An RNA of 207 nucleotides, treated with DMS and 2A3 and read out base by base. For 2A3 the reverse transcriptase was SuperScript II with manganese. It was measured as part of the RMDB library OK3TST. The RNA was probed in 150 mM KOAc, 10 mM MgCl2 and 150 mM bicine (pH 8.5) at 24 C.

RNA sequence: GGGAACGACUCGAGUAGAGUCGAAAAGGCUGGUGCCGGAGCCGAUACCGGAAUACGAGACCUAAUGUGCGGUCGAAUGCACUGAAGUACGAAAGUACGAAGAGGUCAAACCGAGGACCGAGACUCGAUAUGCUCGAUAGAUGGAGCUUUACAUCAACCUAUGAUCAGUAUUCGUACUGAUCAUAGGAAAAGAAACAACAACAACAAC
Reactivity to DMS in 0.01 (KOAc 150mM, MgCl2 10mM, bicine 150mM(pH8.5), 24C), signal-to-noise 3, nucleotides 027 to 156: g020g010c010u020g000g040u010g000c010c030g010g000a110g040c030c050g020a140u000a070c030c010g010g030a090a110u010a110c060g010a190g000a070c040c010u020a080a140u010g010u010g010c020g040g020u010c140g000a120a130u010g040c000a020c020u000g010a100a220g040u000a030c020g000a180a130a280g010u020a020c010g000a110a140g010a090g010g030u010c020a100a090a160c050c030g010a140g000g010a110c060c020g010a150g060a060c030u000c020g010a150u010a090u000g000c040u000c040g020a100u000a120g010a110u000g030g000a080g010c060u000u000u010a070c090a130u000c030a090a220
Reactivity to 2A3 in 0.01 (KOAc 150mM, MgCl2 10mM, bicine 150mM(pH8.5), 24C), signal-to-noise 6, nucleotides 027 to 156: g030g000c030u050g020g080u080g020c010c020g010g000a010g060c070c090g070a030u090a080c020c010g000g070a080a030u150a090c110g040a030g020a090c010c000u050a110a050u110g010u010g010c000g020g030u100c080g050a070a040u130g010c010a000c020u050g030a050a000g020u010a000c010g040a120a020a010g000u000a000c000g010a030a000g100a030g020g000u010c000a000a040a020c050c030g030a030g010g050a010c030c040g030a020g000a060c020u020c020g050a050u040a050u210g010c010u010c020g060a080u070a150g080a020u070g040g010a020g010c000u050u080u060a090c050a060u080c030a050a030